[RMDB]
RNA sequence: GGGAACGACUCGAGUAGAGUCGAAAAAGAAUAGUUUUCGAACUAUUCUCACGACGACCUUGGGAAACCCAGAGGCGCGAUCCCACGCGAUCGUCUGUUCGAACACCUGGUUGUUCGCAACCAGGAAGCUCAGAACAAAAUUCGUUUUGUUCUGAGCAAAAGAAACAACAACAACAAC
Reactivity to DMS in 0.01 (KOAc 150mM, MgCl2 10mM, bicine 150mM(pH8.5), 24C), signal-to-noise 2, nucleotides 027 to 126: a010g010a010a010u000a010g000u000u000u010u000c160g020a010a010c000u000a000u000u000c000u000c080a160c100g000a020c040g010a080c150c020u000u000g020g000g000a090a170a180c170c000c020a100g010a080g010g000c060g010c010g000a130u000c000c000c080a110c100g010c080g010a100u000c030g020u000c020u010g010u020u000c070g020a130a040c200a130c020c000u000g000g000u000u000g030u000u030c180g000c000a000a000c000c000a020g000g000a040a080
Reactivity to 2A3 in 0.01 (KOAc 150mM, MgCl2 10mM, bicine 150mM(pH8.5), 24C), signal-to-noise 3, nucleotides 027 to 126: a010g000a000a000u010a000g000u020u010u080u200c220g040a010a000c000u000a000u000u000c020u020c030a070c040g040a000c020g050a050c000c030u020u020g000g000g000a140a260a100c010c010c040a080g060a100g170g070c070g000c020g040a030u000c010c000c020a030c070g080c060g070a150u030c010g030u010c110u140g120u090u150c090g030a060a030c040a030c080c000u000g010g000u000u010g010u040u060c240g000c080a000a010c000c000a000g000g010a000a020
Background: An RNA of 177 nucleotides, treated with DMS and 2A3 and read out base by base. Source: RMDB library M2PK50, as collected in RNAgym. The RNA was probed in 150 mM KOAc, 10 mM MgCl2 and 150 mM bicine (pH 8.5) at 24 C. The 2A3 profile rests on 2,699 reads.